[RMDB]
RNA sequence: GGGAACGACUCGAGUAGAGUCGAAAAAGGUUCGCUGUGGUGCAACUCUUAUUAGUAACUAAUCCAAAGCAAGUAUAGGAGGACAGGUUUUUAACUAUUUUUAGGCAGAUAAAAAAUAGUAUUUGACAAAAUCGAUUGUCGUUCGCGACAAUCGAAAGAUACAUGUUACCUUCGGGUAACAUGUAUCAAAAGAAACAACAACAACAAC
Reactivity to DMS in 0.01 (KOAc 150mM, MgCl2 10mM, bicine 150mM(pH8.5), 24C), signal-to-noise 2, nucleotides 027 to 156: a100g010g060u010u000c060g080c000u000g030u000g010g040u000g000c050a080a090c040u010c010u010u000a110u000u000a100g040u000a070a110c050u010a050a100u000c060c030a060a100a120g000c090a020a130g020u000a110u000a080g010g020a030g020g010a050c040a080g020g000u000u010u010u000u010a060a100c010u000a010u000u000u000u000u000a070g000g000c040a120g000a140u020a000a000a020a000a000a050u000a010g020u000a140u010u000u000g010a150c070a030a060a060a190u000c000g000a050u000u000g020u000c000g010u000u000c300g000c010g010a020c000a010a010u000c010g000a000a010a050
Reactivity to 2A3 in 0.01 (KOAc 150mM, MgCl2 10mM, bicine 150mM(pH8.5), 24C), signal-to-noise 3, nucleotides 027 to 156: a010g040g000u030u040c040g000c020u010g030u040g060g010u010g010c010a040a060c030u010c030u140u100a160u090u070a090g070u040a080a080c040u030a080a060u080c080c030a080a040a010g050c030a050a020g040u050a070u110a140g020g020a010g010g030a030c040a030g020g070u000u020u010u000u040a000a010c000u000a020u000u010u000u010u010a030g000g060c020a010g030a110u120a050a040a020a000a000a000u000a000g010u020a080u060u090u130g060a040c040a010a120a030a080u020c010g000a000u010u000g010u000c010g000u030u040c190g000c000g050a010c010a000a000u000c000g000a010a000a000

Source: RMDB library M2RFPK, as collected in RNAgym. Chemical mapping of a 207-nucleotide RNA with DMS and 2A3. For 2A3, 2,252 sequencing reads were counted. For 2A3 the reverse transcriptase was SuperScript II with manganese.